[RMDB]
RNA sequence: GGGAACGACUCGAGUAGAGUCGAAAAACCUGGCAUGAUCUGGGACAGCGACAUCUUGGGGACAGAGAUGGGCCAGGAAGGAGGGGGCAGAGAGCUAGAGAUGGAGACCCACCACGGGGUGGGAGGCCGCUCUAACGAAAUUCGUUUCGUUAGAGCGAAAAGAAACAACAACAACAAC
Reactivity to 2A3 in 0.01 (KOAc 150mM, MgCl2 10mM, bicine 150mM(pH8.5), 24C), signal-to-noise 1, nucleotides 027 to 126: a000c030c020u020g040g000c070a130u060g100a120u090c020u040g000g010g010a050c050a060g020c040g090a050c020a090u070c060u060u130g000g040g030g160a030c000a060g120a040g040a030u050g020g070g030c010c040a030g000g040a010a010g050g010a060g000g020g000g010g020c000a020g080a020g020a020g030c030u110a010g020a000g010a110u070g040g000a020g000a040c030c010c000a010c010c000a080c140g280g060g010g000u020g010g000g000a030g040g020c070
Reactivity to DMS in 0.01 (KOAc 150mM, MgCl2 10mM, bicine 150mM(pH8.5), 24C), signal-to-noise 2, nucleotides 027 to 126: a090c010c000u010g010g010c020a070u010g000a120u000c060u010g000g020g010a100c110a090g010c050g060a120c100a050u000c050u000u000g000g000g010g010a110c100a070g010a110g000a050u000g010g020g020c030c030a040g020g010a120a060g000g000a080g000g000g000g000g040c050a020g000a070g010a080g020c000u020a100g000a100g020a130u000g000g000a090g020a210c000c010c010a040c020c020a160c280g010g000g040g000u000g020g000g000a060g010g000c100
This 177-nucleotide RNA was probed chemically with 2A3 and DMS. As a SHAPE reagent, 2A3 marks flexible, mostly unpaired nucleotides at the ribose 2'-OH. The reactions ran in a buffer of 150 mM KOAc, 10 mM MgCl2 and 150 mM bicine (pH 8.5), at 24 C. For DMS the reverse transcriptase was MarathonRT. Values cover nucleotides 27 to 126. For 2A3 the reverse transcriptase was SuperScript II with manganese.